[RMDB]
RNA sequence: GGGAACGACUCGAGUAGAGUCGAAAAAUAUCGGAAUGGUUUGCCGUAUGACCAAGAUUGAAAUAUCUAAACACGAUGAGAUAAUAGAGUUGGAGCCACUUCUACUCAUAUUAUUUUUUACGGUAAACCAUUUAAUCCUGUUCGCAGGAUUAAAUGGAAAAGAAACAACAACAACAAC
Reactivity to 2A3 in 0.01 (KOAc 150mM, MgCl2 10mM, bicine 150mM(pH8.5), 24C), signal-to-noise 8, nucleotides 027 to 126: a000u150a080u100c050g070g080a120a060u080g040g000u010u010u040g040c000c000g000u010a030u070g020a020c020c020a020a010g010a020u040u100g060a080a080a030u200a020u020c030u050a060a090a010c090a030c110g110a090u200g020a020g000a060u010a010a010u010a010g000a000g010u030u110g030g010a020g130c230c080a200c050u010u000c010u030a010c000u000c040a080u010a010u010u000a010u010u010u000u010u020u020a010c010g000g000u020a030a020a000
Reactivity to DMS in 0.01 (KOAc 150mM, MgCl2 10mM, bicine 150mM(pH8.5), 24C), signal-to-noise 9, nucleotides 027 to 126: a100u030a050u030c110g010g000a070a060u010g000g000u000u000u000g000c000c000g010u000a010u010g000a130c110c100a100a020g000a020u000u000g000a130a070a100u010a030u000c010u000a060a050a070c150a130c200g000a080u030g010a030g010a010u000a000a010u000a020g000a010g000u010u020g020g000a030g000c170c210a070c110u020u000c000u000a020c000u000c000a050u000a000u000u000a000u000u000u010u010u010u000a000c000g000g010u000a010a020a040